RNA sequence: GGGAACGACUCGAGUAGAGUCGAAAAGAAAGAAAGAAAGAACCAUGCUGGACCUUGGCACUGGGAGAAUUCACAGGAGUUGGUUAUCAUACCCGUGAAUUUCCCGAUGCCUCAGUUUAGUGUGCAAAGGACCAACUCGAUUCGUCGAGUUGGUCCUAAAAGAAACAACAACAACAAC
Reactivity to 2A3 in 0.01 (KOAc 150mM, MgCl2 10mM, bicine 150mM(pH8.5), 24C), signal-to-noise 2, nucleotides 027 to 126: g150a010a110a000g100a000a040a000g130a000a080a000g010a030a000c030c010a000u000g000c010u020g010g000a010c000c000u010u000g010g020c000a000c100u030g000g070g000a030g090a030a040u000u000c020a010c030a110g100g040a200g030u080u110g170g080u260u160a140u130c060a000u160a090c000c000c000g010u000g010a000a000u080u000u000c050c000c000g020a030u000g010c000c000u000c000a000g000u000u010u000a020g000u000g020u030g010c010a000a270